[RMDB]
RNA sequence: GGGAACGACUCGAGUAGAGUCGAAAACCCGUUCAUUUCGAUGAACGGGAGUGGGUAACCCUAGGACCAGUAGUGGGACCCGUAGUGGCCGAGGGACCAGUAAAGAGUUAACAUUCGUGUUAACUAACUUAGAAAGCAGGUUCGCCUGCUUUCUAAGAAAAGAAACAACAACAACAAC
Reactivity to DMS in 0.01 (KOAc 150mM, MgCl2 10mM, bicine 150mM(pH8.5), 24C), signal-to-noise 2, nucleotides 027 to 126: c000c000c000g010u000u010c000a020u000u010u010c170g010a020u010g000a000a000c000g010g010g000a030g000u010g020g000g000u010a070a110c000c010c000u010a100g000g010a140c030c030a100g020u020a100g020u010g020g000g010a150c030c020c020g000u010a050g010u000g000g020c020c000g010a040g000g010g000a090c020c010a100g000u010a060a060a140g000a030g010u000u000a000a010c010a070u010u020c200g010u000g000u000u000a000a010c000u000a030a120
Reactivity to 2A3 in 0.01 (KOAc 150mM, MgCl2 10mM, bicine 150mM(pH8.5), 24C), signal-to-noise 2, nucleotides 027 to 126: c020c000c000g010u000u000c010a030u020u020u140c280g160a010u000g010a000a010c010g000g000g000a050g060u100g020g000g030u060a070a110c000c000c000u000a060g010g140a220c020c030a050g050u070a040g090u260g040g100g060a070c000c020c000g010u020a030g030u040g020g000c030c040g010a020g030g000g000a030c020c010a000g060u070a020a130a040g210a010g010u010u010a010a010c010a010u060u100c150g030u040g010u020u000a010a010c010u010a030a000